Structure probing data (DMS and 2A3) for a 177-nucleotide construct. The reactions ran in a buffer of 150 mM KOAc, 10 mM MgCl2 and 150 mM bicine (pH 8.5), at 24 C. The 2A3 profile rests on 8,510 reads. For 2A3 the reverse transcriptase was SuperScript II with manganese.
RNA sequence: GGGAACGACUCGAGUAGAGUCGAAAAGAUAUGGACGCAUACAGACAUGCUGACAGAUCGGAAACGAUCUGUAGCAACAGCUGUAAUGCGUCCUAAGUCAAAACCCGAGCACUUCGGUGCUCGGGAACCCCUAUAUUUAGUUCGCUAAAUAUAGGGGAAAAGAAACAACAACAACAAC
Reactivity to DMS in 0.01 (KOAc 150mM, MgCl2 10mM, bicine 150mM(pH8.5), 24C), signal-to-noise 3, nucleotides 027 to 126: g000a040u000a300u010g000g020a020c000g030c010a010u000a010c010a010g020a070c160a180u020g000c000u000g000a030c010a020g010a010u000c010g020g010a100a070a090c000g000a010u000c010u000g010u000a020g010c010a050a090c300a150g000c000u000g010u000a050a050u000g010c010g010u000c000c000u000a010a070g000u000c040a120a090a130a170c010c000c000g000a030g020c000a000c010u000u020c280g010g040u000g000c000u010c000g010g020g000a010a020
Reactivity to 2A3 in 0.01 (KOAc 150mM, MgCl2 10mM, bicine 150mM(pH8.5), 24C), signal-to-noise 4, nucleotides 027 to 126: g030a010u040a030u110g000g000a000c000g000c010a010u010a010c000a000g170a070c110a230u300g020c000u030g110a050c000a000g010a010u000c010g000g000a030a030a010c000g000a010u010c000u000g000u010a010g020c000a100a090c100a160g110c000u000g000u050a300a140u010g010c000g000u010c000c000u000a010a010g020u000c010a030a090a050a050c000c000c020g010a000g000c020a010c030u120u200c300g190g000u000g010c010u010c040g030g010g000a010a010